Background: Conditions: 150 mM KOAc, 10 mM MgCl2 and 150 mM bicine (pH 8.5), 24 C. Chemical mapping of a 177-nucleotide RNA with 2A3 and DMS. Source: RMDB library TTRDEL, as collected in RNAgym. For 2A3, 7,872 sequencing reads were counted.
RNA sequence: GGGAACGACUCGAGUAGAGUCGAAAAGAUAUGGAUAUAUCUCGAGGUGUGAUUCCCUCGGAAACGAGCAUCACACUACCCACCGAGUAAGUAUCCUAAGUCAAAGUCCUGGCUUCGGCCAGGACAAUCUAUUGUUUAGCUUCGGCUAAACAAUAGAAAAAGAAACAACAACAACAAC
Reactivity to 2A3 in 0.01 (KOAc 150mM, MgCl2 10mM, bicine 150mM(pH8.5), 24C), signal-to-noise 3, nucleotides 027 to 126: g050a010u090a070u180g000g000a000u020a010u000a090u120c010u000c020g020a040g000g000u010g000u010g010a020u060u150c080c010c000u000c010g000g000a020a060a030c020g000a000g000c040a020u010c000a000c000a020c020u030a060c060c060c020a040c020c010g000a000g010u090a300a140g010u000a050u020c000c000u050a220a020g080u060c070a120a120a050g000u000c010c000u000g000g000c010u090u110c300g120g000c000c010a000g000g000a000c000a000a000
Reactivity to DMS in 0.01 (KOAc 150mM, MgCl2 10mM, bicine 150mM(pH8.5), 24C), signal-to-noise 5, nucleotides 027 to 126: g000a050u000a300u000g000g010a010u000a010u000a300u000c000u000c020g000a080g020g010u000g000u000g000a020u000u000c250c270c000u020c000g000g000a060a060a130c010g000a020g030c230a010u000c000a020c000a010c000u000a050c050c050c070a300c120c010g000a000g010u000a070a130g020u000a010u000c000c010u000a030a180g010u000c040a080a150a070g000u000c000c000u010g000g010c000u000u010c210g020g000c000c000a000g000g000a000c000a000a010